[RMDB]
RNA sequence: GGGAACGACUCGAGUAGAGUCGAAAAGAUAUGGAAUAGCUAUGAAGGUGGAUACGUUGAAAUAAGUUGCGAGAUCGGAAACGAUCUCGCAACUUAUGGAGUAUGCACUGGAGCUAUUCCUAAGUCAUCACUAUCGAUAGUUCGCUAUCGAUAGUGAAAAAGAAACAACAACAACAAC
Reactivity to DMS in 0.01 (KOAc 150mM, MgCl2 10mM, bicine 150mM(pH8.5), 24C), signal-to-noise 2, nucleotides 027 to 126: g010a040u000a300u000g000g000a010a000u000a000g000c010u010a130u020g010a190a200g000g010u000g020g010a010u000a000c010g010u010u020g010a170a100a000u010a000a000g030u000u000g040c000g030a060g000a020u010c000g020g010a100a120a250c000g010a000u000c000u000c000g010c000a000a000c000u000u000a000u000g010g010a090g010u000a010u000g000c020a020c000u010g010g000a010g010c000u010a000u000u000c000c000u000a010a080g000u010c030a260